[RMDB]
RNA sequence: GGGAACGACUCGAGUAGAGUCGAAAAGCAUGACCUCUGCCGAGGUAGUUCGUGGGGUAGAGCGACCGAUUGGGGAGUUCAACUCCGAGAGGAGUUGUCUCCCCUGUCAAACUCCAAACCUACGGACUCUCUGUGCGUAAUUCGUUACGCACAGAGAAAAAGAAACAACAACAACAAC
Reactivity to DMS in 0.01 (KOAc 150mM, MgCl2 10mM, bicine 150mM(pH8.5), 24C), signal-to-noise 4, nucleotides 027 to 126: g030c190a070u010g020a050c030c000u000c010u010g010c200c120g000a010g010g000u020a010g020u000u000c000g010u000g020g000g010g020u020a130g000a020g000c090g000a300c300c230g020a030u000u010g000g000g000g000a010g000u060u000c000a000a010c000u000c000c000g010a180g000a150g010g000a010g020u000u010g000u000c000u000c000c000c000c000u000g000u000c000a070a280a220c010u000c000c060a030a080a220c010c000u000a010c000g030g010a000c010
Reactivity to 2A3 in 0.01 (KOAc 150mM, MgCl2 10mM, bicine 150mM(pH8.5), 24C), signal-to-noise 5, nucleotides 027 to 126: g070c080a090u160g040a030c010c020u040c020u100g150c130c160g010a020g030g000u010a020g000u010u010c000g000u000g000g010g010g010u070a040g010a010g000c050g060a110c110c030g010a050u020u030g000g000g000g010a010g020u120u070c000a000a000c000u010c000c010g020a040g000a010g020g000a000g000u000u000g000u010c000u000c010c000c000c000u000g010u000c000a020a010a010c000u000c000c000a150a190a110c010c000u010a000c000g000g000a000c000

An RNA of 177 nucleotides, treated with DMS and 2A3 and read out base by base. For DMS the reverse transcriptase was MarathonRT. For 2A3, 5,126 sequencing reads were counted. For 2A3 the reverse transcriptase was SuperScript II with manganese. The RNA was probed in 150 mM KOAc, 10 mM MgCl2 and 150 mM bicine (pH 8.5) at 24 C.